[RMDB]
RNA sequence: GGGAACGACUCGAGUAGAGUCGAAAAGUCGGAAGGCCUCUUCUGCCUCGGCAGGGCGUUCAUGCUUGAGCAGGAGGAACCCCUCCAGGUAGGCGGCGUCGGGGAUCGAUCCCGCCCGGCCGAGGGCGAACAGAGUGAGGUUCGCCUCACUCUGUUCAAAAGAAACAACAACAACAAC
Reactivity to DMS in 0.01 (KOAc 150mM, MgCl2 10mM, bicine 150mM(pH8.5), 24C), signal-to-noise 4, nucleotides 027 to 126: g020u000c050g010g020a070a080g010g010c050c070u000c080u000u000c030u000g020c020c010u000c040g010g010c040a040g000g000g010c080g000u000u010c080a080u010g000c040u000u000g000a120g010c050a080g000g000a060g010g000a060a060c090c050c010c000u000c020c030a070g010g010u010a070g010g010c040g020g030c170g010u000c070g020g000g010g000a110u010c090g010a120u000c120c030c000g000c010c000c000g000g000c010c030g010a030g000g000g020c140
Reactivity to 2A3 in 0.01 (KOAc 150mM, MgCl2 10mM, bicine 150mM(pH8.5), 24C), signal-to-noise 3, nucleotides 027 to 126: g070u060c030g000g070a070a040g060g030c000c050u120c060u080u020c020u060g060c000c000u000c020g000g020c000a020g010g030g010c060g040u130u140c070a080u130g030c030u150u170g070a040g050c030a020g010g070a010g020g050a050a030c030c040c010c000u010c010c000a030g090g000u090a030g040g040c020g010g010c030g030u050c030g020g000g000g030a090u160c050g020a060u040c000c000c000g000c000c000c010g010g000c000c010g000a030g020g020g010c030